[RMDB]
RNA sequence: GGGAACGACUCGAGUAGAGUCGAAAAUAGGUGACGGAUGUACCGGCAGGCCGCCUCCACGGUGGUCGCUUUGGACGGCGCGGCCGACACAUUUUGCUGUUUCCACUCCGCGGGGAUUAAAGACGCACGUAAUCAGGAUCUUCGGAUCCUGAUUACGAAAAGAAACAACAACAACAAC
Reactivity to DMS in 0.01 (KOAc 150mM, MgCl2 10mM, bicine 150mM(pH8.5), 24C), signal-to-noise 1, nucleotides 027 to 126: u020a080g000g040u030g000a060c070g040g010a010u030g000u000a100c030c120g000g020c000a140g000g000c010c000g000c020c110u030c150c050a050c150g000g000u040g000g020u010c040g000c030u020u020u030g000g000a140c090g010g000c020g000c030g040g010c030c000g010a070c020a010c020a090u020u010u000u040g000c030u000g000u000u000u000c000c060a070c080u000c010c010g030c050g000g010g000g030a140u060u040a080a060a090g000a070c050g070c120a140
Reactivity to 2A3 in 0.01 (KOAc 150mM, MgCl2 10mM, bicine 150mM(pH8.5), 24C), signal-to-noise 3, nucleotides 027 to 126: u130a020g100g000u020g030a040c020g030g020a090u030g000u080a030c020c030g000g040c040a050g080g000c060c020g020c000c030u010c100c050a150c100g010g000u030g000g140u130c050g020c020u070u020u100g070g040a150c060g000g000c030g000c000g020g020c000c000g080a020c040a000c000a070u070u050u080u190g080c050u020g010u020u040u030c010c020a020c050u040c030c010g000c030g090g000g010g020a040u100u180a100a100a000g050a030c050g070c020a050
An RNA of 177 nucleotides, treated with DMS and 2A3 and read out base by base. For DMS, 2,087 sequencing reads were counted. It was measured as part of the RMDB library OK1LIB. The RNA was probed in 150 mM KOAc, 10 mM MgCl2 and 150 mM bicine (pH 8.5) at 24 C.